[RMDB]
RNA sequence: GGGAACGACUCGAGUAGAGUCGAAAAACUUCGGCACGGCCAAAUGCUGGUUGGACCAACAAUGGGUGGGAAGACAUCUGCUUCUCGCGUUCUGCAGGCCGCAAUGACAAAGCUUCGAGUGGAACUAGCUACUCGAUAGGUUCGCCUAUCGAGUAGCAAAAGAAACAACAACAACAAC
Reactivity to 2A3 in 0.01 (KOAc 150mM, MgCl2 10mM, bicine 150mM(pH8.5), 24C), signal-to-noise 3, nucleotides 027 to 126: a000c030u090u040c010g020g000c060a090c050g010g010c020c020a040a180a100u130g000c100u020g090g000u030u130g040g090a050c040c040a000a050c120a090a140u140g010g060g000u020g010g020g010a010a070g050a040c010a130u140c130u170g040c000u030u020c000u000c020g030c000g030u140u100c040u030g000c020a000g090g000c000c060g060c010a030a220u150g010a020c060a000a110a000g000c020u110u170c140g010a000g000u070g000g020a050a000c000u040a030
Reactivity to DMS in 0.01 (KOAc 150mM, MgCl2 10mM, bicine 150mM(pH8.5), 24C), signal-to-noise 1, nucleotides 027 to 126: a100c050u000u000c100g050g000c180a060c040g000g000c000c090a230a040a120u000g030c060u010g000g000u000u000g000g030a300c010c040a100a110c030a180a150u000g000g000g030u010g010g000g000a070a000g000a070c070a090u020c070u000g020c000u000u000c000u000c050g000c040g020u000u000c120u080g000c070a120g020g000c010c020g000c050a000a020u070g000a140c010a020a160a260g000c000u000u000c000g000a100g010u020g000g000a090a210c120u000a140

The record gives the reactivity of an RNA of 177 nucleotides to 2A3 and DMS. For DMS, 1,394 sequencing reads were counted. The RNA was probed in 150 mM KOAc, 10 mM MgCl2 and 150 mM bicine (pH 8.5) at 24 C. Source: RMDB library OK1LIB, as collected in RNAgym. 2A3 is a SHAPE reagent: it acylates the 2'-hydroxyl of flexible nucleotides of all four kinds. For 2A3 the reverse transcriptase was SuperScript II with manganese.